[RMDB]
RNA sequence: GGGAACGACUCGAGUAGAGUCGAAAAAAUAGCCAACAAACGGUUUAUAUUGGUGAUUCAACAUUUGAUGUUGAGAUGGCGCAACAUGCUGGUGUACCAUCUGCAGCAGUAACAUGGGGAGCACAUGGACGGAGCAAUUUUUCGAAAUUGCUCCGUCAAAAGAAACAACAACAACAAC
Reactivity to DMS in 0.01 (KOAc 150mM, MgCl2 10mM, bicine 150mM(pH8.5), 24C), signal-to-noise 1, nucleotides 027 to 126: a150a040u040a020g000c020c040a130a100c200a000a260a060c100g000g010u000u010u010a070u060a030u000u010g000g000u030g000a130u000u000c010a100a020c040a010u000u070u020g000a120u000g000u000u000g000a030g020a060u040g000g010c150g030c000a000a050c030a040u020g000c170u030g000g000u000g000u010a180c050c070a020u000c000u050g000c000a040g020c000a000g020u020a040a040c170a020u000g040g010g000g010a000g000c000a000c060a020u070g000
Reactivity to 2A3 in 0.01 (KOAc 150mM, MgCl2 10mM, bicine 150mM(pH8.5), 24C), signal-to-noise 2, nucleotides 027 to 126: a000a000u250a040g070c040c020a050a000c080a040a170a060c130g060g080u080u220u040a060u040a070u090u270g010g000u050g060a210u020u000c020a020a050c000a090u000u000u150g090a090u010g000u000u010g000a000g000a030u010g000g000c000g030c000a030a000c030a100u120g100c070u120g100g090u050g010u070a030c000c000a020u010c000u060g110c000a000g030c000a000g050u110a040a000c010a010u000g000g000g020g000a000g070c060a000c000a080u200g140
Chemical mapping of a 177-nucleotide RNA with DMS and 2A3. For DMS, 1,337 sequencing reads were counted. The RNA was probed in 150 mM KOAc, 10 mM MgCl2 and 150 mM bicine (pH 8.5) at 24 C. It was measured as part of the RMDB library OK1LIB.